Structure probing data (DMS) for a 177-nucleotide construct. Source: RMDB libraries RFM100 and RFMREP, as collected in RNAgym. For DMS the reverse transcriptase was MarathonRT.
RNA sequence: GGGAACGACUCGAGUAGAGUCGAAAACUUGUACACACCGCCCGUCACUAUCUCAGAUGUUUUUCAGGAUGAAGAGUCCAGGCUCUGAAUAAUGAAAAGUAGAUAAGAUGUAAGUCGUAACAAGGUUUUACGUUCAAAUGUUCGCAUUUGAACGUAAAAAAGAAACAACAACAACAAC
Reactivity to DMS in 0.01 (KOAc 150mM, MgCl2 10mM, bicine 150mM(pH8.5), 24C), signal-to-noise 3, nucleotides 027 to 126: c020u010u020g010u000a060c080a120c050a030c070c050g010c030c010c030g020u000c050a050c070u000a050u000c020u020c030a050g000a120u010g020u000u000u000u000u000c060a060g030g000a050u000g000a190a000g000a060g000u000c020c140a120g010g000c010u000c010u000g000a250a060u000a050a040u000g010a020a040a000a040g010u020a020g020a150u020a070a070g010a020u010g010u020a090a130g000u010c100g000u030a020a040c080a060a110g000g010u000u000